[RMDB]
RNA sequence: GGGAACGACUCGAGUAGAGUCGAAAAGAUAUGGACUGAACCAAGGUCUAUGAAGAAACACCAGCAAGGCUUCGGAAACGAAGCUGAUGACCUGGUGUUUUGGAGACUCAAAGUCAGUCCUAAGUCACUUAGCAUCUUGGUUCGCCAAGAUGCUAAGAAAAGAAACAACAACAACAAC
Reactivity to 2A3 in 0.01 (KOAc 150mM, MgCl2 10mM, bicine 150mM(pH8.5), 24C), signal-to-noise 1, nucleotides 027 to 126: g000a060u030a060u090g000g030a000c000u010g000a160a120c080c060a170a220g050g000u000c000u060a300u130g020a040a010g070a040a000a000c000a040c020c000a000g000c020a080a140g040g020c000u010u000c010g040g000a040a070a060c010g000a020a000g000c000u020g020a090u130g030a000c090c020u000g050g000u020g010u000u000u000u010g000g000a000g020a000c020u050c270a150a200a080g010u000c010a000g000u080c000c000u000a030a000g020u000c000a020
Reactivity to DMS in 0.01 (KOAc 150mM, MgCl2 10mM, bicine 150mM(pH8.5), 24C), signal-to-noise 2, nucleotides 027 to 126: g010a020u000a300u020g000g010a000c000u000g020a020a060c030c040a260a240g000g000u000c000u000a170u000g010a260a200g010a000a000a010c000a010c000c010a010g000c020a070a120g020g000c010u000u000c000g020g000a110a060a090c010g030a070a030g000c000u000g000a060u030g020a100c300c010u000g000g020u000g030u000u000u020u010g000g000a030g000a020c010u000c020a030a300a300g010u000c000a000g000u000c000c030u010a000a110g000u000c010a160

Conditions: 150 mM KOAc, 10 mM MgCl2 and 150 mM bicine (pH 8.5), 24 C. An RNA of 177 nucleotides, treated with 2A3 and DMS and read out base by base. The 2A3 profile rests on 1,894 reads.